RNA sequence: GGGAACGACUCGAGUAGAGUCGAAAAUCUUGACGGCGGUAAGGAAGUCCACAUGCCAGGCAUUGAUGCAGUUUUGCGAAAGAGAUCGUGCCAUGACGGCAUCAGCGUCCGCUGUCACGUUGCGUGGACCCUAGGCCUAGUUCGCUAGGCCUAGGGUAAAAGAAACAACAACAACAAC
Reactivity to DMS in 0.01 (KOAc 150mM, MgCl2 10mM, bicine 150mM(pH8.5), 24C), signal-to-noise 1, nucleotides 027 to 126: u020c250u030u000g050a040c000g020g020c000g000g060u020a060a110g000g000a010a170g000u000c000c020a020c130a040u030g000c000c000a300g000g030c000a020u060u000g000a030u000g020c080a020g000u000u060u140u010g000c080g020a100a030a080g000a150g030a070u000c000g010u000g000c050c000a190u050g010a080c040g000g000c080a000u000c030a110g010c050g000u000c010c000g000c000u000g000u000c000a000c300g000u000u020g000c230g000u000g000g000
Reactivity to 2A3 in 0.01 (KOAc 150mM, MgCl2 10mM, bicine 150mM(pH8.5), 24C), signal-to-noise 3, nucleotides 027 to 126: u020c010u030u080g000a000c030g000g000c000g000g050u080a110a150g220g100a240a040g030u050c020c000a040c000a100u070g010c000c030a040g020g020c000a030u070u300g010a050u080g000c060a140g180u080u180u300u110g060c120g130a090a020a000g110a020g030a000u000c010g000u020g000c000c010a050u120g090a040c160g000g000c000a000u030c000a000g040c000g070u000c000c000g000c000u020g000u000c000a020c040g000u000u100g100c120g040u210g120g030